[RMDB]
RNA sequence: GGGAACGACUCGAGUAGAGUCGAAAAAUACGAGUUUAGUGUAAGAGGAAUUCAAAUGUUUCUCUGAGUAAUGCCAAUAAUUUCCACUCCAUGUCACUUCUAGUGCUUUCUGUCCCUUUGAUCCAGCCAGGACAAUGGUUUAAGCAGUGGAGAGGAGGAAACCCUACUUGUUCGCAAGUAGGGUUUCAAAAGAAACAACAACAACAAC
Reactivity to 2A3 in 0.01 (KOAc 150mM, MgCl2 10mM, bicine 150mM(pH8.5), 24C), signal-to-noise 2, nucleotides 027 to 156: a000u150a030c080g010a040g070u070u090u180a120g030u200g060u130a050a040g000a000g010g050a030a000u130u180c170a260a040a170u300g010u000u000u000c000u000c000u000g000a000g050u090a060a080u150g050c000c000a060a000u210a100a040u120u040u000c010c000a030c000u000c010c010a050u090g110u170c040a030c020u090u050c040u230a070g080u030g000c000u080u150u020c050u070g090u140c000c000c000u080u040u050g040a130u090c000c010a030g200c040c000a030g070g000a000c020a000a030u030g000g040u060u030u090a030a010g000c010a030g010u000g040g010a030g010a030g030g040a020g010
Reactivity to DMS in 0.01 (KOAc 150mM, MgCl2 10mM, bicine 150mM(pH8.5), 24C), signal-to-noise 2, nucleotides 027 to 156: a130u010a100c070g010a120g010u010u000u000a120g030u000g010u000a190a010g030a020g000g030a020a020u000u010c020a100a140a150u000g010u000u000u000c010u000c010u010g000a260g030u000a070a070u010g020c040c050a080a080u000a070a130u000u000u000c000c030a070c020u010c000c000a040u010g000u000c210a040c050u020u010c110u000a070g010u010g030c020u000u000u000c070u010g000u000c020c010c060u010u000u000g000a200u010c130c080a140g040c080c070a080g000g000a080c020a000a030u000g020g010u010u000u000a070a070g050c030a090g020u000g010g010a060g020a070g010g020a120g020